[RMDB]
RNA sequence: GGGAACGACUCGAGUAGAGUCGAAAAAAUACUAAGUACAUCGAUGCACCCUGCGCAAGGAAUUUCUGUGGAUCUAUCUGGGCUCGAUGCGUUGAGGAGAUUGUGGGGUCCAGUUUUGAAUUGUACAAUAUCCUGUACUUUUCGAAGUACAGGAUAUAAAAGAAACAACAACAACAAC
Reactivity to 2A3 in 0.01 (KOAc 150mM, MgCl2 10mM, bicine 150mM(pH8.5), 24C), signal-to-noise 4, nucleotides 027 to 126: a000a000u260a080c080u100a120a030g020u010a020c010a040u050c040g080a030u060g030c010a030c000c000c000u040g000c060g010c080a040a040g060g040a070a090u030u140u060c050u060g090u100g070g060a020u000c010u040a060u010c010u040g030g000g000c010u010c020g090a060u070g060c060g040u020u040g050a040g070g050a050g010a070u130u100g040u070g040g010g010g000u000c000c020a000g010u000u020u060u100g050a050a040u070u050g020u020a020c010a030
Reactivity to DMS in 0.01 (KOAc 150mM, MgCl2 10mM, bicine 150mM(pH8.5), 24C), signal-to-noise 9, nucleotides 027 to 126: a070a050u010a090c070u000a080a100g010u010a050c060a050u000c080g010a080u000g010c120a080c030c020c020u000g010c110g000c110a090a060g000g010a070a060u000u000u000c060u010g020u010g010g010a050u000c040u000a060u000c020u010g000g000g000c020u000c030g000a060u000g010c100g010u000u000g010a090g000g020a120g000a080u000u010g030u000g000g010g000g010u000c040c020a040g010u010u000u000u000g000a060a100u010u000g010u010a050c080a110
The record gives the reactivity of an RNA of 177 nucleotides to 2A3 and DMS. It was measured as part of the RMDB library OK2TST. For DMS the reverse transcriptase was MarathonRT. The reactions ran in a buffer of 150 mM KOAc, 10 mM MgCl2 and 150 mM bicine (pH 8.5), at 24 C.